The data come from the RNA Mapping Database (RMDB), library M2PK90. The record gives the reactivity of an RNA of 177 nucleotides to DMS and 2A3. Conditions: 150 mM KOAc, 10 mM MgCl2 and 150 mM bicine (pH 8.5), 24 C. For 2A3, 4,158 sequencing reads were counted. 2A3 adducts were read by reverse transcription with SuperScript II with manganese.

RNA sequence: GGGAACGACUCGAGUAGAGUCGAAAAAAGCAGGGUGUGAGAGAAACUCUCUCCCAGCCGGUACGCGCAGCCACCCUUUUCGACUCUACUCGGGUUAGCUGCGCGAACUGGCUGGCGUUCCCCAGAAUCCAAAUAUCCAUUUCGAUGGAUAUUUGGAAAAAGAAACAACAACAACAAC
Reactivity to DMS in 0.01 (KOAc 150mM, MgCl2 10mM, bicine 150mM(pH8.5), 24C), signal-to-noise 3, nucleotides 027 to 126: a100a050g020c170a050g010g020g020u000g010u010g010a080g010a090g020a140a110a100c110u010c040u010c030u000c070c000c000a010g000c000c000g000g000u000a030c030g020c010g020c010a010g010c000c040a040c010c010c030u010u010u010u000c020g010a000c000u000c000u000a010c000u000c010g000g000g010u000u010a030g000c000u000g010c020g020c000g010a060a010c010u000g000g000c000u010g010g000c010g020u010u000c000c000c000c100a180g000a110a110
Reactivity to 2A3 in 0.01 (KOAc 150mM, MgCl2 10mM, bicine 150mM(pH8.5), 24C), signal-to-noise 2, nucleotides 027 to 126: a010a000g220c120a030g010g000g020u050g010u060g030a060g010a010g020a100a130a080c030u050c010u010c050u070c070c010c000a000g000c000c000g000g000u010a010c000g000c000g000c000a010g010c000c010a010c010c010c010u130u080u060u120c020g010a000c010u000c010u010a010c010u010c000g000g010g000u010u010a000g020c010u010g010c060g000c060g010a010a010c010u020g000g000c000u000g010g000c000g010u000u010c010c000c000c000a010g070a060a050